[RMDB]
Overview:
An RNA of 177 nucleotides, treated with DMS and 2A3 and read out base by base. Source: RMDB library OK2TRN, as collected in RNAgym. The RNA was probed in 150 mM KOAc, 10 mM MgCl2 and 150 mM bicine (pH 8.5) at 24 C. As a SHAPE reagent, 2A3 marks flexible, mostly unpaired nucleotides at the ribose 2'-OH.
RNA sequence: GGGAACGACUCGAGUAGAGUCGAAAAGGGCAAGUUCAAAGUGGUAACAUUAGAAUGCACAUAGGGGAGAGAGAAGUAAUUGAAGAUCUUAACGCCAAGUGUAUAGAGUACAACCUGAGCGAUCUCCACUUAGCUUCACAUUCGUGUGAAGCUAAGUAAAAGAAACAACAACAACAAC
Reactivity to DMS in 0.01 (KOAc 150mM, MgCl2 10mM, bicine 150mM(pH8.5), 24C), signal-to-noise 5, nucleotides 027 to 126: g030g010g020c060a070a090g020u000u000c050a030a100a140g010u000g010g010u010a090a080c060a110u000u010a160g020a070a090u000g020c070a040c070a100u000a090g000g000g010g020a110g000a060g010a050g000a050a080g000u000a060a100u020u020g010a070a070g000a080u010c060u000u000a070a180c110g010c020c020a050a060g020u000g020u000a050u010a100g010a130g010u000a030c040a020a110c040c030u000g000a080g020c030g010a060u000c020u010c050c120
Reactivity to 2A3 in 0.01 (KOAc 150mM, MgCl2 10mM, bicine 150mM(pH8.5), 24C), signal-to-noise 3, nucleotides 027 to 126: g000g000g000c030a000a050g010u050u050c040a070a010a080g040u030g070g030u070a040a010c010a020u030u040a050g100a230a050u150g010c060a040c030a080u160a020g010g000g020g010a070g000a010g000a000g010a110a020g040u080a060a120u110u160g080a070a030g030a080u020c010u060u040a060a040c020g040c060c020a020a010g010u010g010u020a070u040a080g110a000g060u000a020c020a080a000c040c020u020g000a000g040c020g030a040u020c010u010c040c000